[RMDB]
This 177-nucleotide RNA was probed chemically with DMS and 2A3.
Reactivities are given for positions 27 through 126.
DMS adducts were read by reverse transcription with MarathonRT.
The data come from the RNA Mapping Database (RMDB), library VIROID.

RNA sequence: GGGAACGACUCGAGUAGAGUCGAAAAUUGAGAGAACCCCAGAGGGUGGACAUCCACACGGAGGUAAGCAGACAAAUCACCUCCAGAGGACCCCUUCAGCGAACAGAGAGCUCUGAGCCGCGAGGAGCCAUAGUUUAUCCUUCGGGAUAAACUAUGGAAAAGAAACAACAACAACAAC
Reactivity to DMS in 0.01 (KOAc 150mM, MgCl2 10mM, bicine 150mM(pH8.5), 24C), signal-to-noise 2, nucleotides 027 to 126: u000u000g030a150g000a290g000a110a080c020c010c000c090a190g020a050g020g000g090u010g020g010a090c130a110u000c000c010a030c130a270c160g020g000a010g000g030u010a060a100g040c120a150g020a080c280a030a100a220u020c060a090c010c030u010c000c010a000g010a200g010g010a080c050c000c020c050u000u010c040a090g000c020g000a050a030c120a040g000a120g010a140g000c010u010c020u000g000a200g000c030c010g000c110g000a050g000g000a130g020
Reactivity to 2A3 in 0.01 (KOAc 150mM, MgCl2 10mM, bicine 150mM(pH8.5), 24C), signal-to-noise 1, nucleotides 027 to 126: u030u030g020a020g000a010g000a120a070c040c000c030c000a060g030a040g060g050g040u250g050g030a060c030a070u000c000c010a030c000a020c090g010g020a020g010g000u040a030a060g160c110a080g090a270c070a050a060a050u100c010a020c010c030u000c000c020a000g060a060g030g020a020c000c000c000c020u010u020c020a010g000c010g020a040a000c050a050g090a010g000a060g110c060u020c040u070g050a060g010c000c030g070c060g010a020g010g050a010g030